[RMDB]
RNA sequence: GGGAACGACUCGAGUAGAGUCGAAAACGUGAAUCUUAAUUUACCCGCAAAUGUCCCAUACUCUCGUGUUAUUUCCAGGAUGGGCUUUAAACUCGAUGCAACAGUUCCUGGAUAUCCUAAGCUUUUCACAUCCAAGAGUUCGCUCUUGGAAAAAGAAACAACAACAACAAC
Reactivity to 2A3 in 0.01 (KOAc 150mM, MgCl2 10mM, bicine 150mM(pH8.5), 24C), signal-to-noise 6, nucleotides 027 to 129: c040g000u030g060a030a040u050c070u050u140a100a080u120u070u120a100c020c010c000g020c050a060a080a070u140g050u060c000c010c010a020u070a120c060u080c020u020c060g040u060g050u130u110a100u080u060u010c010c010a000g000g030a030u030g010g000g040c000u030u090u070a090a080a030c050u030c120g050a070u140g020c050a130a090c010a170g070u050u010c000c000u000g000g010a030u020a050u040c010c010u050a060a050g020c010u080u060u030u040c060a040c010a060
Reactivity to DMS in 0.01 (KOAc 150mM, MgCl2 10mM, bicine 150mM(pH8.5), 24C), signal-to-noise 5, nucleotides 027 to 129: c000g030u040g030a040a120u030c090u020u060a040a040u020u000u010a110c010c000c000g040c170a000a070a080u050g020u010c050c020c030a160u000a120c090u040c020u030c080g000u050g000u040u040a130u010u040u060c030c030a090g000g000a000u020g000g000g000c000u000u050u030a080a140a190c000u020c060g030a080u050g040c070a060a070c110a120g010u040u010c000c000u040g040g000a040u000a010u010c040c060u030a040a070g010c180u040u010u020u030c060a020c200a140

Chemical mapping of a 170-nucleotide RNA with 2A3 and DMS. The 2A3 profile rests on 22,148 reads. For 2A3 the reverse transcriptase was SuperScript II with manganese. Reactivities are given for positions 27 through 129. DMS adducts were read by reverse transcription with MarathonRT. The reactions ran in a buffer of 150 mM KOAc, 10 mM MgCl2 and 150 mM bicine (pH 8.5), at 24 C. The DMS profile rests on 16,835 reads.